Structure probing data (2A3 and DMS) for a 177-nucleotide construct.
2A3 adducts were read by reverse transcription with SuperScript II with manganese.
The reactions ran in a buffer of 150 mM KOAc, 10 mM MgCl2 and 150 mM bicine (pH 8.5), at 24 C.
For DMS, 7,305 sequencing reads were counted.
Reactivities are given for positions 27 through 126.

RNA sequence: GGGAACGACUCGAGUAGAGUCGAAAAGUGAAGGCAUGGGGUUUCGGCCCCAUGGAAGCCGAUCAAAGGCUCAUAAGCGAGGCUCUCGCUGGCCCGCGCGUUGCGGCGCAUGAUGCGCUGGAACUCAAAAAUGAUCGGUAUUCGUACCGAUCAUUUUAAAAGAAACAACAACAACAAC
Reactivity to 2A3 in 0.01 (KOAc 150mM, MgCl2 10mM, bicine 150mM(pH8.5), 24C), signal-to-noise 2, nucleotides 027 to 126: g040u050g070a070a040g090g040c010a000u010g000g000g000g030u010u020u060c130g180g000c020c000c010c020a000u010g000g000a010a000g000c000c000g010a030u170c090a080a050a050g010g000c000u020c070a170u120a130a020g040c040g030a080g120g050c040u050c030u050c160g020c040u020g010g060c020c000c000g020c020g000c050g000u000u070g130c010g010g000c000g000c010a030u300g090a140u250g050c000g000c000u020g010g060a020a000c030u030c110a050
Reactivity to DMS in 0.01 (KOAc 150mM, MgCl2 10mM, bicine 150mM(pH8.5), 24C), signal-to-noise 6, nucleotides 027 to 126: g020u000g010a120a120g000g020c010a010u000g000g010g010g020u000u000u010c180g020g010c000c000c000c000a010u000g000g010a100a060g010c010c010g000a140u030c230a100a130a210g000g000c010u000c110a100u000a100a070g010c030g010a050g010g000c150u010c050u000c050g020c040u010g010g020c010c000c030g000c210g020c250g030u000u000g000c010g010g010c000g020c000a110u000g010a140u010g020c010g000c000u000g000g010a020a030c010u040c090a020